Structure probing data (DMS and 2A3) for a 207-nucleotide construct. For 2A3, 3,608 sequencing reads were counted.
RNA sequence: GGGAACGACUCGAGUAGAGUCGAAAACAUCGGUGUUUCGACACCGAUGAAAAAGCGUACUACGAGGUCAGUUGAGUUGAGAUUCCCAAAUAGGAAUCCAACAAUGAUGCUGACUACCCACCGUAUCGCAAAAAAGAAGCGCGUUCGCGCGCUUCAACCCCAAAAUUGUAUUCGUACAAUUUUGGGGAAAAGAAACAACAACAACAAC
Reactivity to DMS in 0.01 (KOAc 150mM, MgCl2 10mM, bicine 150mM(pH8.5), 24C), signal-to-noise 1, nucleotides 027 to 156: c000a010u000c010g000g090u000g030u020u000u000c280g020a200c000a010c030c000g000a000u000g010a000a060a100a170a140g000c040g020u010a050c210u000a060c040g000a040g020g000u000c000a000g070u010u000g000a300g010u000u020g000a190g000a010u000u000c000c000c010a030a120a180u010a090g020g000a030a000u000c010c020a160a020c020a010a050u000g040a290u000g000c010u000g040a070c010u000a000c010c000c000a300c160c010g010u020a040u000c000g010c020a000a080a060a040a160a150g010a010a010g040c010g020c000g000u010u030c260g070c020g030c000g040c000u010u010c000a010a120
Reactivity to 2A3 in 0.01 (KOAc 150mM, MgCl2 10mM, bicine 150mM(pH8.5), 24C), signal-to-noise 2, nucleotides 027 to 156: c010a010u000c010g020g020u020g010u060u140u110c170g110a010c010a000c000c020g020a000u000g000a010a000a000a030a000g010c010g020u040a040c040u010a010c080g020a010g000g030u000c010a000g000u020u040g070a010g010u040u070g090a180g000a300u000u000c000c030c000a110a160a050u170a040g000g000a000a000u000c010c010a020a020c010a040a100u210g060a040u110g030c000u000g000a000c010u020a020c000c000c010a040c000c020g000u000a020u200c030g000c040a050a050a030a040a000a040g020a030a000g000c050g000c010g030u040u070c170g000c000g000c000g000c060u010u010c020a040a110

Values cover nucleotides 27 to 156.